This 177-nucleotide RNA was probed chemically with DMS and 2A3. Values are in units of 0.01, from 0 to 300, in steps of 10. The reactions ran in a buffer of 150 mM KOAc, 10 mM MgCl2 and 150 mM bicine (pH 8.5), at 24 C.
[RMDB]
RNA sequence: GGGAACGACUCGAGUAGAGUCGAAAACGGUACCGGUCAUCCUGAACGUAACCAGUGGCGAAACAGAUACGCCGUCAUCCAGUCAGGAAAUGGACAGUCGUCUGGAUCUGCGAAUACCACGGCAGGGCCUGGUAUGAGGCUUCGGCCUCAUACCAGGAAAAGAAACAACAACAACAAC
Reactivity to DMS in 0.01 (KOAc 150mM, MgCl2 10mM, bicine 150mM(pH8.5), 24C), signal-to-noise 2, nucleotides 027 to 126: c140g010g000u000a080c060c030g010g010u020c030a100u010c000c020u000g020a080a080c100g010u000a110a100c060c050a160g040u000g000g000c020g000a120a100a070c060a070g010a050u010a070c090g040c030c030g020u000c050a130u000c040c060a090g020u000c090a130g000g000a070a130a020u010g000g000a020c080a040g000u000c030g020u000c050u000g000g010a030u000c020u000g000c040g020a020a060u000a140c020c040a040c030g010g040c030a050g000g010g010
Reactivity to 2A3 in 0.01 (KOAc 150mM, MgCl2 10mM, bicine 150mM(pH8.5), 24C), signal-to-noise 2, nucleotides 027 to 126: c030g020g060u060a060c030c040g010g040u060c060a070u020c000c030u060g080a140a030c040g070u120a060a090c010c030a060g000u030g050g020c040g000a110a070a040c070a080g090a080u080a100c020g000c010c000g010u000c000a030u030c020c000a000g070u040c050a040g110g000a030a140a060u090g020g050a010c030a080g060u040c030g010u020c120u080g080g000a000u010c030u070g030c000g020a010a030u090a120c030c000a050c020g010g000c010a020g030g000g040